[RMDB]
RNA sequence: GGGAACGACUCGAGUAGAGUCGAAAAUUCCUUCUUCUUCAACGGUUUGGACGAGCCGACUCGCUUCGCCUGCUACCCCGUGUCGCACCCUCACGGUGCGUGGCGUUUCCUCUCGCCCCAAUUAUGCCAUCUUGAUAAGGUUCGCCUUAUCAAGAUGAAAAGAAACAACAACAACAAC
Reactivity to DMS in 0.01 (KOAc 150mM, MgCl2 10mM, bicine 150mM(pH8.5), 24C), signal-to-noise 7, nucleotides 027 to 126: u010u000c010c010u010u010c090u010u000c050u000u000c100a100a150c100g010g010u000u000u000g010g000a100c090g010a110g000c040c040g020a110c060u000c050g000c050u000u010c060g020c050c030u000g010c040u000a110c040c030c020c030g010u000g010u010c030g000c040a060c020c010c060u010c130a090c140g010g010u000g010c030g020u000g010g010c040g020u000u000u000c020c010u000c030u000c060g010c040c000c010c030a090a120u010u000a100u010g010c190
Reactivity to 2A3 in 0.01 (KOAc 150mM, MgCl2 10mM, bicine 150mM(pH8.5), 24C), signal-to-noise 5, nucleotides 027 to 126: u040u030c020c000u030u050c040u050u000c020u100u070c030a070a050c030g060g020u050u060u070g100g040a050c030g020a030g010c050c010g060a070c010u020c040g030c010u060u050c030g010c010c010u030g040c010u060a070c000c020c000c010g020u030g060u060c030g010c040a040c020c000c000u100c010a080c050g000g000u010g010c030g000u000g020g000c020g000u020u040u020c010c000u010c010u010c020g060c000c000c000c000a040a080u190u070a060u170g050c040
An RNA of 177 nucleotides, treated with DMS and 2A3 and read out base by base. The DMS profile rests on 10,819 reads. The RNA was probed in 150 mM KOAc, 10 mM MgCl2 and 150 mM bicine (pH 8.5) at 24 C. It was measured as part of the RMDB library RFMREP.